[RMDB]
RNA sequence: GGGAACGACUCGAGUAGAGUCGAAAAGAUAUGGACCACGGUACGGGAGCUCAACAGCUCGGAAACGAGACAUGAGCAGUAUUGGUCCUAAGUCAAAGCUCCGCUAAGGUUCGCCUUAGCGGAGCAAGCUUAUUAAAGAGUUCGCUCUUUAAUAAGCAAAAGAAACAACAACAACAAC
Reactivity to 2A3 in 0.01 (KOAc 150mM, MgCl2 10mM, bicine 150mM(pH8.5), 24C), signal-to-noise 3, nucleotides 027 to 126: g020a010u070a050u160g000g000a000c020c040a070c270g160g020u020a010c020g040g160g300a140g010c000u000c000a040a130c050a190g040c010u010c010g010g020a050a050a020c010g000a010g020a030c060a160u140g000a000g000c020a010g000u010a020u020u100g010g000u000c000c000u030a170a000g010u020c060a230a070a050g000c010u000c000c000g010c000u000a000a020g030g020u050u190c290g120c030c000u000u020a000g000c030g000g020a030g010c000a000a000
Reactivity to DMS in 0.01 (KOAc 150mM, MgCl2 10mM, bicine 150mM(pH8.5), 24C), signal-to-noise 5, nucleotides 027 to 126: g010a040u000a300u010g000g000a010c000c010a030c300g000g020u000a000c020g010g000g030a140g010c000u000c010a040a090c240a180g000c010u000c000g000g000a050a040a090c010g000a020g000a050c080a190u000g000a010g060c010a080g000u000a020u000u000g000g000u000c000c000u000a030a090g000u000c010a070a130a160g000c010u000c000c000g000c000u000a000a000g020g010u010u010c270g000c000c000u000u000a000g000c000g030g000a000g010c000a000a010

Chemical mapping of a 177-nucleotide RNA with 2A3 and DMS. Reactivities are rounded to 0.1 and cut off at 0 and 3. Conditions: 150 mM KOAc, 10 mM MgCl2 and 150 mM bicine (pH 8.5), 24 C. The 2A3 profile rests on 6,413 reads. Reactivities are given for positions 27 through 126. 2A3 adducts were read by reverse transcription with SuperScript II with manganese.